[RMDB]
RNA sequence: GGGAACGACUCGAGUAGAGUCGAAAAGGCCAACAGGCCCAUGAACAGGAAGCCCAGGAUUUACAGAAUGUACAGAAGUCCGGAUGUUCCUAAGGGGUGUGAGGGUCCGUGUAAGGUCCAGUCAUUCCCGAUAGCAAUUAUUCGUAAUUGCUAUCGGAAAAGAAACAACAACAACAAC
Reactivity to 2A3 in 0.01 (KOAc 150mM, MgCl2 10mM, bicine 150mM(pH8.5), 24C), signal-to-noise 5, nucleotides 027 to 126: g000g000c020c000a020a060c030a100g050g030c020c020c010a090u080g040a080a030c030a100g030g020a030a020g030c020c020c010a030g020g010a030u030u050u060a010c020a040g230a300a250u200g100u120a050c050a130g120a110a000g060u010c020c000g000g000a050u110g190u060u000c000c000u030a060a110g040g020g000g020u140g030u030g050a060g020g000g010u030c030c020g010u030g030u100a130a090g030g010u000c040c020a030g040u040c010a050u090u050c000
Reactivity to DMS in 0.01 (KOAc 150mM, MgCl2 10mM, bicine 150mM(pH8.5), 24C), signal-to-noise 7, nucleotides 027 to 126: g000g010c010c000a090a070c110a100g010g010c010c010c020a060u010g000a140a140c200a050g010g000a060a110g010c070c010c020a140g020g000a040u000u010u000a080c060a140g020a150a090u010g010u010a080c210a150g010a060a030g010u000c020c010g000g010a050u010g000u000u000c000c010u010a080a110g000g010g000g020u000g010u010g000a130g010g000g010u000c020c050g000u010g010u010a060a100g000g000u000c010c020a110g000u000c050a100u000u000c040
Chemical mapping of a 177-nucleotide RNA with 2A3 and DMS.
For 2A3 the reverse transcriptase was SuperScript II with manganese.
DMS (dimethyl sulfate) methylates the pairing face of unpaired adenines and cytosines.
For DMS the reverse transcriptase was MarathonRT.
The DMS profile rests on 9,121 reads.